Structure probing data (DMS and 2A3) for a 177-nucleotide construct.

RNA sequence: GGGAACGACUCGAGUAGAGUCGAAAAGCUUUUAUUUUCUAUUGUGCAAGGUAAGCAAAAAAGGAUCCAGCUUAGGUAAAAAGAAACAUGUCUUACAGCCAGAGUUUACACUCCAUAAAAUGGAGUAUCAUACAGUAGAGUUCGCUCUACUGUAUGAAAAAGAAACAACAACAACAAC
Reactivity to DMS in 0.01 (KOAc 150mM, MgCl2 10mM, bicine 150mM(pH8.5), 24C), signal-to-noise 4, nucleotides 027 to 126: g000c090u010u010u010u000a070u010u010u000u000c040u020a130u000u000g010u000g010c080a060a080g010g000u010a020a060g010c050a000a030a080a060a070a080g000g010a060u000c040c050a040g000c050u010u010a040g010g010u010a030a030a080a070a070g010a070a080a080c090a040u000g020u000c030u000u000a050c070a110g000c010c040a150g010a100g020u010u000u010a070c130a050c020u000c000c000a000u000a070a040a070a300u000g010g000a000g010u010a040
Reactivity to 2A3 in 0.01 (KOAc 150mM, MgCl2 10mM, bicine 150mM(pH8.5), 24C), signal-to-noise 3, nucleotides 027 to 126: g010c010u090u130u060u150a150u060u160u070u050c060u060a150u110u230g060u040g040c020a050a020g100g010u100a060a020g030c040a020a060a010a000a040a080g060g010a030u020c020c010a010g040c050u050u070a030g050g040u070a060a140a010a020a000g010a020a090a010c050a060u130g070u040c000u020u050a040c030a000g000c010c010a000g030a020g080u000u020u040a080c080a000c010u000c010c000a040u180a180a270a010a020u060g010g000a000g020u000a030
The 2A3 profile rests on 2,333 reads. For 2A3 the reverse transcriptase was SuperScript II with manganese. It was measured as part of the RMDB library RFMREP. For DMS, 3,530 sequencing reads were counted.